Chemical mapping of a 177-nucleotide RNA with DMS and 2A3.
The reactions ran in a buffer of 150 mM KOAc, 10 mM MgCl2 and 150 mM bicine (pH 8.5), at 24 C.
Reactivities are given for positions 27 through 126.
It was measured as part of the RMDB library OK2TRN.
RNA sequence: GGGAACGACUCGAGUAGAGUCGAAAAUUUAAACUAAACAAUCUAAGCUUCAAUGAAAGAUACUUAGUUGCUAGACACUGUCAACAACUCUUUCGCAGAGACGCAGAAGCAGAAAUAACCACAACAAACCCCAUGUUAUAUUCGUAUAACAUGGGGUAAAAGAAACAACAACAACAAC
Reactivity to DMS in 0.01 (KOAc 150mM, MgCl2 10mM, bicine 150mM(pH8.5), 24C), signal-to-noise 3, nucleotides 027 to 126: u010u010u010a080a040a150c060u010a090a110a120c050a040a060u000c010u000a080a100g010c030u000u010c010a080a110u010g000a050a080a090g030a110u000a060c200u000u010a040g010u000u010g040c070u010a100g000a120c100a090c220u000g010u010c030a020a040c080a080a080c050u000c020u000u000u020c060g030c100a050g000a080g010a090c230g010c080a060g000a070a100g010c030a020g020a070a050a080u000a060a080c040c020a090c050a050a040c040a060a130
Reactivity to 2A3 in 0.01 (KOAc 150mM, MgCl2 10mM, bicine 150mM(pH8.5), 24C), signal-to-noise 2, nucleotides 027 to 126: u070u090u030a040a050a020c040u080a000a020a130c030a060a060u050c040u110a030a010g000c000u040u000c040a090a190u190g070a090a010a020g010a020u070a100c040u040u040a020g020u010u000g000c020u050a040g080a090c100a070c240u070g050u220c020a020a000c010a000a070c050u000c000u030u040u040c050g000c030a040g020a010g040a210c060g040c070a020g010a040a000g010c010a000g060a020a050a000u040a000a040c020c040a030c010a120a060c010a060a140